[RMDB]
RNA sequence: GGGAACGACUCGAGUAGAGUCGAAAAGAUAUGGAGGAUACAGGCUAGCGUUUCUGAUGUGAAAUAGGAGAUCGGAAACGAUCUCCUAUUUCACAUCAGAUACGCUUGGACCCUGUCCUCCUAAGUCCAGGUAGUAUUUCUUCGGAAAUACUACCUGAAAAGAAACAACAACAACAAC
Reactivity to DMS in 0.01 (KOAc 150mM, MgCl2 10mM, bicine 150mM(pH8.5), 24C), signal-to-noise 2, nucleotides 027 to 126: g010a080u010a300u000g010g010a010g010g000a100u010a060c180a050g010g000c070u000a010g010c000g000u000u000u000c000u010g010a020u000g010u000g000a010a020a020u000a000g000g000a020g020a020u010c000g020g000a130a090a280c020g000a000u000c000u000c000c000u000a020u000u000u000c000a000c000a010u000c010a010g000a010u000a000c010g000c000u000u000g020g000a120c270c000c030u000g010u000c010c010u000c000c010u000a000a080g020u000c040

Conditions: 150 mM KOAc, 10 mM MgCl2 and 150 mM bicine (pH 8.5), 24 C. The record gives the reactivity of an RNA of 177 nucleotides to DMS. The data come from the RNA Mapping Database (RMDB), library TTRINS.